[RMDB]
About this RNA: Conditions: 150 mM KOAc, 10 mM MgCl2 and 150 mM bicine (pH 8.5), 24 C. Structure probing data (DMS and 2A3) for a 177-nucleotide construct. Source: RMDB library M2PK90, as collected in RNAgym.
RNA sequence: GGGAACGACUCGAGUAGAGUCGAAAAACUUUGGCCGACGCUGCUAGGCGGGUGCGCACUGCUGUCUGGCCCGGCGCCGCGCUAGGGCGCACGUUUCGCUCUGCGCAGGGUAACCGGGCUGAAAUAAGAACAAUUGGAUAUUCGUAUCCAAUUGUUCAAAAGAAACAACAACAACAAC
Reactivity to DMS in 0.01 (KOAc 150mM, MgCl2 10mM, bicine 150mM(pH8.5), 24C), signal-to-noise 6, nucleotides 027 to 126: a080c060u000u000u010g010g010c020c020g010a090c090g010c040u000g020c090u000a100g010g010c040g000g000g010u000g010c060g010c040a070c060u000g000c050u000g010u000c060u010g010g010c000c020c000g020g010c190g010c010c010g010c010g000c010u010a010g010g000g000c000g020c140a050c180g010u000u000u010c010g010c010u000c010u000g010c010g020c010a070g020g000g000u010a100a110c010c000g010g010g030c010u000g000a020a050a080u010a090a140
Reactivity to 2A3 in 0.01 (KOAc 150mM, MgCl2 10mM, bicine 150mM(pH8.5), 24C), signal-to-noise 4, nucleotides 027 to 126: a000c050u090u060u110g050g000c000c000g010a030c040g000c050u060g010c050u060a060g050g020c020g030g020g010u100g030c040g000c020a040c060u080g000c020u050g050u120c060u080g010g000c000c000c000g030g000c050g010c000c000g000c000g010c070u130a020g000g000g000c010g020c050a070c070g040u070u200u160c000g000c000u000c000u010g010c000g000c020a180g090g020g010u050a100a090c000c000g000g000g000c000u000g010a010a010a010u180a060a030